[RMDB]
RNA sequence: GGGAACGACUCGAGUAGAGUCGAAAACUUGGUUUCCUUUUGACGAAAGUACUACAGCAUAUUUUUUUAAAUCAUGUAUCCAUGAUGUCGUUGCUACACCUGUAUCAAUUGUUCCAACAAAGGACUUUGUUUGUGAAUUGACAAGAGGAUAGUUAACAACCUCUUACAUUUUCGAAUGUAAGAGGUUAAAAGAAACAACAACAACAAC
Reactivity to DMS in 0.01 (KOAc 150mM, MgCl2 10mM, bicine 150mM(pH8.5), 24C), signal-to-noise 4, nucleotides 027 to 156: c050u010u000g010g010u010u000u000c020c010u000u000u000u000g020a140c060g020a110a090a110g020u000a060c050u000a100c070a110g020c080a120u000a010u000u000u000u000u000u000u000a050a050a070u000c030a040u000g010u000a120u010c130c030a040u020g010a100u010g020u000c010g020u000u000g010c010u000a060c040a070c020c010u020g030u000a050u010c010a030a040u000u000g010u000u000c040c030a020a060c040a020a050a090g020g030a100c140u010u000u000g020u000u000u000g020u000g020a050a070u000u000g010a060c030a030a070g010a070g020g000a130u000a080g010u000u000a040a070c100
Reactivity to 2A3 in 0.01 (KOAc 150mM, MgCl2 10mM, bicine 150mM(pH8.5), 24C), signal-to-noise 4, nucleotides 027 to 156: c020u030u140g080g000u010u030u020c000c000u030u060u000u100g030a020c030g060a100a020a010g030u060a040c060u060a020c050a030g040c060a080u100a170u170u060u050u010u030u100u220a130a170a010u040c020a010u020g060u120a070u070c140c030a020u040g030a040u080g030u040c040g010u000u020g000c010u020a020c040a070c050c020u040g030u100a030u020c010a030a000u030u030g070u170u030c020c010a020a000c010a030a080a020g120g060a100c080u020u010u020g010u010u020u040g020u010g030a030a050u030u040g020a040c050a080a030g020a000g090g030a020u070a090g020u130u170a010a010c010

The record gives the reactivity of an RNA of 207 nucleotides to DMS and 2A3. Values are in units of 0.01, from 0 to 300, in steps of 10. The RNA was probed in 150 mM KOAc, 10 mM MgCl2 and 150 mM bicine (pH 8.5) at 24 C. DMS adducts were read by reverse transcription with MarathonRT. The data come from the RNA Mapping Database (RMDB), library OK3TST.